This 177-nucleotide RNA was probed chemically with 2A3 and DMS. It was measured as part of the RMDB library OK2TRN. The RNA was probed in 150 mM KOAc, 10 mM MgCl2 and 150 mM bicine (pH 8.5) at 24 C. 2A3 adducts were read by reverse transcription with SuperScript II with manganese. For 2A3, 1,483 sequencing reads were counted.

RNA sequence: GGGAACGACUCGAGUAGAGUCGAAAAGCUGGAGAUCUUGGGCUUUGAGGAAGACAUUGAGGACAUGGUUGAGGCUGAUGAGUACCAAGGGGCAGUGGCCAGUAGAGUCCUGGGUAGAGGUGAGCUCGGUUUACGUGCAUUUCGAUGCACGUAAACCAAAAGAAACAACAACAACAAC
Reactivity to 2A3 in 0.01 (KOAc 150mM, MgCl2 10mM, bicine 150mM(pH8.5), 24C), signal-to-noise 1, nucleotides 027 to 126: g010c030u030g020g000a050g030a080u010c030u070u070g040g000g010c000u110u110u080g050a040g000g030a040a040g000a030c050a080u060u200g020a060g060g000a020c090a120u100g000g040u070u100g050a040g050g000c040u010g000a040u080g010a000g050u040a150c020c000a050a050g030g000g000g080c020a020g010u080g050g000c000c000a010g020u000a020g000a010g000u000c030c010u010g000g000g010u070a060g000a040g000g050u060g030a010g010c040u060c070
Reactivity to DMS in 0.01 (KOAc 150mM, MgCl2 10mM, bicine 150mM(pH8.5), 24C), signal-to-noise 2, nucleotides 027 to 126: g020c050u000g000g020a100g020a040u000c040u000u000g010g000g000c040u000u010u010g020a190g000g010a090a040g000a050c110a050u000u020g010a100g020g000a110c130a040u000g020g020u000u000g010a100g000g020c010u010g000a110u000g020a080g010u010a110c040c050a060a100g000g000g000g000c060a040g040u000g000g000c000c030a060g000u010a060g010a100g000u000c010c020u000g010g000g010u000a050g000a090g010g000u000g020a100g000c060u000c090